[RMDB]
RNA sequence: GGGAACGACUCGAGUAGAGUCGAAAAGCCUCCUCGCUUCCAUAGAAAGGGGACGGGGCAGAUCGCAAGUGCUACAACCGAGCGGUGGUAUCUGUCAAACUAAGCAGCCAAUGCACAUCAAUUGACUAAACGAUGCCGAUCUUCGGAUCGGCAUCAACAUUGGUACUCACUUCGGUGAGUACCAAUGAAAAGAAACAACAACAACAAC
Reactivity to DMS in 0.01 (KOAc 150mM, MgCl2 10mM, bicine 150mM(pH8.5), 24C), signal-to-noise 1, nucleotides 027 to 156: g010c020c000u000c010c000u000c000g000c030u000u000c040c020a080u000a160g010a100a110a130g000g010g040g010a010c010g000g030g000g010c130a040g000a090u000c080g000c060a140a050g010u000g000c080u010a070c030a190a120c040c000g000a100g060c030g060g030u000g000g020u000a050u000c030u010g010u020c080a070a090a070c060u000a080a130g020c090a080g000c020c000a020a050u000g060c000a090c060a130u010c130a060a050u010u000g010a090c020u000a110a090a100c040g000a040u000g020c010c000g030a020u000c000u010u000c300g000g000a010u000c020g000g000c010a000u000c000a030a090
Reactivity to 2A3 in 0.01 (KOAc 150mM, MgCl2 10mM, bicine 150mM(pH8.5), 24C), signal-to-noise 3, nucleotides 027 to 156: g020c000c000u030c000c000u010c020g040c100u070u000c040c020a100u080a170g300a090a130a040g000g000g040g000a040c020g010g010g000g000c030a030g040a120u050c040g000c060a100a100g050u050g070c000u060a060c050a120a080c090c070g030a040g020c020g030g020u030g040g000u050a020u030c050u030g050u050c020a050a030a050c120u110a090a050g050c030a020g050c070c050a080a040u040g010c040a050c010a200u200c090a090a210u040u080g040a070c060u110a020a130a040c110g000a000u000g020c020c010g010a000u000c000u020u030c130g040g000a000u000c010g000g000c000a000u000c000a000a000

Source: RMDB library M2RFPK, as collected in RNAgym. This 207-nucleotide RNA was probed chemically with DMS and 2A3. The 2A3 profile rests on 1,405 reads. Values cover nucleotides 27 to 156. The RNA was probed in 150 mM KOAc, 10 mM MgCl2 and 150 mM bicine (pH 8.5) at 24 C.